[RMDB]
RNA sequence: GGGAACGACUCGAGUAGAGUCGAAAAGAUAUGGAUUGUCCAGGUAGCCUCGCUCGGAAACGAGCGGGAGGGCUAUAAUCUGGCAAUCCUAAGUCAAACGUACACACCUGUUCGCAGGUGUGUACGAGGAGUCUUAUUUCUUCGGAAAUAAGACUCCAAAAGAAACAACAACAACAAC
Reactivity to DMS in 0.01 (KOAc 150mM, MgCl2 10mM, bicine 150mM(pH8.5), 24C), signal-to-noise 1, nucleotides 027 to 126: g010a010u000a090u010g000g000a000u000u000g000u020c020c020a010g030g000u000a000g020c000c000u000c000g000c000u020c000g010g000a030a030a080c000g010a020g010c000g010g000g020a160g010g010g020c000u000a240u020a160a050u000c010u010g000g000c000a010a010u000c020c010u000a010a090g000u000c010a100a190a260c020g000u010a020c000a010c000a000c000c000u000g000u000u030c270g020c020a000g000g010u000g010u000g010u000a000c000g000a050
Reactivity to 2A3 in 0.01 (KOAc 150mM, MgCl2 10mM, bicine 150mM(pH8.5), 24C), signal-to-noise 2, nucleotides 027 to 126: g010a010u030a010u080g000g030a010u000u000g210u170c020c040a030g030g050u050a020g030c000c060u300c170g000c000u000c000g020g000a010a000a020c010g000a010g000c050g010g060g020a070g030g020g000c020u080a160u050a300a030u000c010u000g000g000c010a000a000u010c000c010u000a030a000g000u030c000a110a110a040c020g040u020a000c000a010c010a010c000c010u020g060u120u150c300g030c170a000g000g000u000g000u000g000u000a000c010g010a010